RNA sequence: GGGAACGACUCGAGUAGAGUCGAAAAGCUUCUUCUUGUUCUCGAGGGCCUUCCUUCGUCGGUGAUCCUGCCUCUCCCUGUCGGUGAAUCCUCCCCUGAGAGGCCUCUUCCUAGGCCCGGAGUCUAUUAAGUUGGUCCUUCGGGACCAACAAAAGAAACAACAACAACAAC
Reactivity to 2A3 in 0.01 (KOAc 150mM, MgCl2 10mM, bicine 150mM(pH8.5), 24C), signal-to-noise 3, nucleotides 027 to 129: g030c040u040u000c010u080u020c000u050u110g260u080u000c000u010c030g030a050g000g030g000c000c010u030u000c030c000u080u090c010g050u010c060g000g020u030g020a050u070c010c010u040g100c000c030u030c030u030c000c020c020u040g120u050c030g010g080u070g140a070a070u030c000c000u010c000c020c000c000u040g020a030g000a040g050g010c020c000u040c000u050u000c010c020u010a020g000g060c010c000c000g000g000a000g020u040c020u010a190u250u140a120a040
Reactivity to DMS in 0.01 (KOAc 150mM, MgCl2 10mM, bicine 150mM(pH8.5), 24C), signal-to-noise 3, nucleotides 027 to 129: g030c180u000u000c020u000u070c040u020u020g000u030u040c000u030c050g000a120g010g050g090c090c080u000u000c070c010u040u010c030g000u020c090g000g040u000g020a090u000c030c020u020g040c100c010u000c000u000c040c070c120u030g010u030c130g010g010u000g050a100a190u020c060c030u030c000c050c020c000u030g020a070g010a050g070g000c010c000u000c150u010u050c000c040u040a030g000g000c060c020c010g020g020a120g040u040c000u020a210u030u060a050a110